Chemical mapping of a 177-nucleotide RNA with 2A3 and DMS.
For DMS the reverse transcriptase was MarathonRT.

RNA sequence: GGGAACGACUCGAGUAGAGUCGAAAACUCGGUUAAUUCGUUAACCGAGACUUCUUAAACAUCUUUACAACACAUAGAUGGUAAAUAUUCAAAGAUGUUCGAAUGCGAUAAACUUCGGUUUAUCGAAAACCUAAGACUAGUUCGCUAGUCUUAGGUUAAAAGAAACAACAACAACAAC
Reactivity to 2A3 in 0.01 (KOAc 150mM, MgCl2 10mM, bicine 150mM(pH8.5), 24C), signal-to-noise 8, nucleotides 027 to 126: c000u010c000g010g000u020u010a020a010u060u060c140g020u030u020a000a010c010c000g000a000g010a010c010u040u020c010u030u130a080a050a010c000a010u000c000u010u050u050a080c070a200a010c030a060c040a190u190a190g160a280u080g020g010u040a050a150a070u190a090u080u080c050a010a010a010g010a010u020g020u030u040c060g110a180a080u200g060c010g000a000u010a010a000a000c000u030u030c050g080g000u000u010u000a000u000c000g000a070a040
Reactivity to DMS in 0.01 (KOAc 150mM, MgCl2 10mM, bicine 150mM(pH8.5), 24C), signal-to-noise 9, nucleotides 027 to 126: c000u000c000g000g010u000u000a010a020u000u010c170g020u000u010a000a000c000c000g010a020g010a040c090u000u000c010u010u000a090a050a020c000a000u000c000u000u000u000a080c110a090a070c090a060c090a170u010a100g010a120u000g000g000u000a060a050a110u010a110u010u010c160a020a020a020g000a020u000g010u000u000c170g010a060a070u010g010c010g000a000u000a000a010a010c000u000u010c180g020g000u000u000u000a000u000c000g000a040a030

For 2A3, 12,257 sequencing reads were counted. For 2A3 the reverse transcriptase was SuperScript II with manganese. It was measured as part of the RMDB library M2PK50.